[RMDB]
An RNA of 207 nucleotides, treated with DMS and 2A3 and read out base by base.

RNA sequence: GGGAACGACUCGAGUAGAGUCGAAAAGAGGUAGAAGGUGGGACUCUGCUUCAGAGGCAGGGCUCAGACACCAGAACAAUGAGGACUUGCUAAAACAGGAAUGGGGCAGAAGCAGCUUUCCAUAAGGCACGCCAGCAGUGUGCUGUGUCAGUUUACCAAAAAGAGUACCAUUCGUGGUACUCUUUUUAAAAGAAACAACAACAACAAC
Reactivity to DMS in 0.01 (KOAc 150mM, MgCl2 10mM, bicine 150mM(pH8.5), 24C), signal-to-noise 4, nucleotides 027 to 156: g010a070g030g040u000a050g000a100a060g010g030u010g020g020g010a040c030u000c010u000g010c020u000u010c070a260g020a170g040g010c000a030g010g010g000c060u010c020a100g000a150c070a100c040c030a150g020a060a080c070a080a090u010g000a100g020g000a060c030u000u000g000c040u010a050a060a070a100c080a080g020g010a050a090u000g020g010g020g000c020a050g020a050a070g010c040a080g020c060u000u000u000c030c040a040u020a060a160g010g010c010a010c030g020c030c010a130g000c050a210g000u000g010u000g020c020u000g010u010g000u000c020a110g000u000u000u020a110c080c090
Reactivity to 2A3 in 0.01 (KOAc 150mM, MgCl2 10mM, bicine 150mM(pH8.5), 24C), signal-to-noise 2, nucleotides 027 to 156: g030a010g000g010u120a010g020a170a040g030g020u040g000g000g040a090c010u020c000u020g020c020u080u100c090a070g030a070g190g000c010a000g030g000g000c030u020c020a060g060a060c020a020c040c000a000g070a030a070c040a020a110u070g010a050g000g010a070c030u030u030g060c030u080a080a080a040a040c030a030g020g070a070a080u050g080g000g000g000c010a000g010a020a010g000c030a010g000c040u040u080u030c030c000a060u080a080a060g020g030c000a000c030g050c020c050a050g000c040a080g160u100g010u080g110c000u010g010u000g010u010c000a010g010u010u080u090a050c100c030
Overview:
Values cover nucleotides 27 to 156. The reactions ran in a buffer of 150 mM KOAc, 10 mM MgCl2 and 150 mM bicine (pH 8.5), at 24 C.